Overview: Chemical mapping of a 177-nucleotide RNA with DMS and 2A3. The reactions ran in a buffer of 150 mM KOAc, 10 mM MgCl2 and 150 mM bicine (pH 8.5), at 24 C. Values cover nucleotides 27 to 126. Source: RMDB library M2PK90, as collected in RNAgym. 2A3 adducts were read by reverse transcription with SuperScript II with manganese.
RNA sequence: GGGAACGACUCGAGUAGAGUCGAAAAGCCGACUGCACGUGCGUGCGAGCAGUUUUCGAAAUCGCACGUUUCACGUAAAGACCCAACUCUACUCGAUGCGAGGGUCAGCAACCAAGCAGCAAUAAAACUAUAACCUCAUGUUCGCAUGAGGUUAUAGAAAAGAAACAACAACAACAAC
Reactivity to DMS in 0.01 (KOAc 150mM, MgCl2 10mM, bicine 150mM(pH8.5), 24C), signal-to-noise 4, nucleotides 027 to 126: g020c060c040g030a110c080u010g030c220a040c020g030u000g020c020g000u000g030c000g000a020g010c120a190g010u010u010u010u010c120g020a040a140a140u000c020g010c010a010c010g000u000u000u010c020a020c030g020u000a050a160a090g010a110c030c020c030a110a030c010u000c000u010a010c000u000c020g010a020u000g000c020g020a100g000g000g010u000c030a090g000c030a080a100c040c050a030a140g020c040a060g010c110a080a090u010a050a040a060a160
Reactivity to 2A3 in 0.01 (KOAc 150mM, MgCl2 10mM, bicine 150mM(pH8.5), 24C), signal-to-noise 3, nucleotides 027 to 126: g040c010c010g050a090c030u040g030c020a010c020g010u020g010c010g010u010g000c010g000a060g050c100a070g020u050u060u170u240c080g080a090a090a090u000c000g000c000a000c000g000u020u080u070c020a010c010g010u010a040a030a030g020a010c000c000c020a000a050c000u040c010u020a020c010u000c030g040a040u070g030c030g020a080g000g010g000u010c010a020g000c020a030a040c040c000a010a010g040c020a000g010c030a060a130u070a210a080a020a020